RNA sequence: GGGAACGACUCGAGUAGAGUCGAAAACUGCCCUGCAGCCUACUGACGAGCAGGGCUGCGAUCUGCUCUUACUGGAGCAGAUGUCGGCGGCGCGCGGCAUGAGCAGCACGGGCAGCGAGGGCGCGUCCCCGCCGCGGUAUUUCGAUACCGCGGCGGGAAAAGAAACAACAACAACAAC
Reactivity to 2A3 in 0.01 (KOAc 150mM, MgCl2 10mM, bicine 150mM(pH8.5), 24C), signal-to-noise 2, nucleotides 027 to 126: c010u010g000c000c010c010u020g000c010a000g000c010c010u080a070c050u080g110a100c020g060a020g080c060a070g000g150g020c010u000g000c000g000a010u000c010u010g000c010u000c020u060u300a300c250u300g010g000a010g000c020a000g000a010u010g290u080c060g200g020c010g020g000c030g000c010g020c020g070g000c040a050u110g040a060g020c030a000g000c070a050c150g030g000g000c010a000g030c000g060a050g040g010g000c010g030c020g100u100c020
Reactivity to DMS in 0.01 (KOAc 150mM, MgCl2 10mM, bicine 150mM(pH8.5), 24C), signal-to-noise 1, nucleotides 027 to 126: c070u000g000c000c000c010u000g010c010a080g000c000c010u010a120c070u010g010a070c030g020a140g000c040a180g010g000g000c000u010g000c000g040a030u000c000u000g000c000u000c000u000u020a120c300u000g000g000a000g000c020a010g010a000u000g000u010c000g000g000c010g030g000c020g020c050g020c050g020g000c020a050u010g010a150g020c010a020g040c130a050c240g020g010g000c000a040g020c030g010a080g000g010g010c020g040c100g000u010c010
Chemical mapping of a 177-nucleotide RNA with 2A3 and DMS. High DMS reactivity at an A or C suggests that its Watson-Crick edge is free. DMS adducts were read by reverse transcription with MarathonRT. Conditions: 150 mM KOAc, 10 mM MgCl2 and 150 mM bicine (pH 8.5), 24 C. For 2A3, 1,883 sequencing reads were counted.